[RMDB]
RNA sequence: GGGAACGACUCGAGUAGAGUCGAAAAGGAUGAUCUGGACCCGGCCAGUAAUCCGAAUUAGUACCGGGAUUGCAUCGUCGAGCCGUCAGGGGCGAAGACGAGAACCUGAAAGCACGAAGCACCGGGCGGUGCGGGUGCGAGAUAUAACGCCCAACAAAGUAAUACUAUUAUUCGUAAUAGUAUUACUAAAAGAAACAACAACAACAAC
Reactivity to DMS in 0.01 (KOAc 150mM, MgCl2 10mM, bicine 150mM(pH8.5), 24C), signal-to-noise 3, nucleotides 027 to 156: g020g030a060u000g010a160u000c010u000g010g000a140c000c020c010g040g000c000c000a090g010u000a140a040u010c020c030g010a070a140u000u000a120g010u000a080c050c040g020g000g000a110u000u000g050c010a160u000c000g000u000c010g010a300g030c010c000g000u010c060a170g030g000g010g010c010g020a110a250g000a060c030g000a080g000a060a090c010c060u000g020a110a100a170g020c020a060c010g010a160a260g020c030a070c030c020g000g000g050c110g020g000u000g020c030g000g000g050u000g020c020g000a040g010a120u000a090u000a090a050c020g010c010c010c000a050a080c140a090a260
Reactivity to 2A3 in 0.01 (KOAc 150mM, MgCl2 10mM, bicine 150mM(pH8.5), 24C), signal-to-noise 3, nucleotides 027 to 156: g020g000a030u080g010a080u130c000u010g010g000a030c000c010c000g010g010c000c000a020g010u060a020a050u000c000c010g010a030a080u230u100a100g080u070a050c000c000g010g000g010a060u080u160g040c050a070u010c000g020u010c000g020a030g010c000c010g130u230c190a080g220g030g060g000c010g030a060a010g010a000c000g000a000g000a030a070c000c040u120g040a170a070a000g000c010a000c010g040a070a010g000c000a010c040c030g050g090g000c120g000g000u010g000c000g050g050g000u000g010c020g010a010g010a000u170a010u020a100a050c050g030c000c020c020a030a050c060a020a190
About this RNA: Chemical mapping of a 207-nucleotide RNA with DMS and 2A3. High DMS reactivity at an A or C suggests that its Watson-Crick edge is free. The 2A3 profile rests on 2,500 reads. Reactivities are given for positions 27 through 156.